This 177-nucleotide RNA was probed chemically with DMS. For DMS the reverse transcriptase was MarathonRT. Source: RMDB library OK2TRN, as collected in RNAgym.
RNA sequence: GGGAACGACUCGAGUAGAGUCGAAAAAACGGCACGCACCCAUCCAGCGACGAGGGCAUCGUGGACCGCACAGCCUGCGCGCACUGGAGCGGCCACUGCUGCCUGUGGAACACGCCCGUCCAGGUGAAAAACCAGGAUGAUUCGUCAUCCUGGUUUUAAAAGAAACAACAACAACAAC
Reactivity to DMS in 0.01 (KOAc 150mM, MgCl2 10mM, bicine 150mM(pH8.5), 24C), signal-to-noise 5, nucleotides 027 to 126: a070a070c100g010g020c050a060c080g010c080a120c030c020c020a150u010c050c040a030g000c080g000a080c080g010a190g000g010g010c030a030u010c100g030u000g000g000a130c030c020g040c020a060c010a060g000c040c040u010g010c050g010c040g000c070a160c010u000g010g010a110g040c020g000g000c010c010a030c030u010g040c060u000g000c000c010u000g000u010g020g010a080a090c120a090c090g000c060c010c010g000u000c040c020a090g010g000u010g010a060